[RMDB]
RNA sequence: GGGAACGACUCGAGUAGAGUCGAAAACAGAUGAUGUUCGCAUCAUCUGAAAUAAAACCCAUGCAGGAAGGAAGGAGCAUGGCAACCAACCAACCAAAAUAAAAAUCUGUUCCUUCGGGAACAGAAACGUACUCACUUUGUUCGCAAAGUGAGUACGAAAAGAAACAACAACAACAAC
Reactivity to 2A3 in 0.01 (KOAc 150mM, MgCl2 10mM, bicine 150mM(pH8.5), 24C), signal-to-noise 1, nucleotides 027 to 126: c000a000g000a000u000g010a000u000g090u100u110c270g010c160a020u000c000a000u000c000u000g020a010a000a000u040a000a030a040a070c030c000c010a020u080g070c140a080g140g050a110a010g070g000a080a000g000g000a060g010c100a100u120g130g000c040a100a050c000c000a000a010c040c000a000a050c020c000a060a080a090a000u230a020a040a000a010a000u000c000u020g000u000u010c000c000u050u150c300g070g000g040a000a000c000a000g010a000a000a000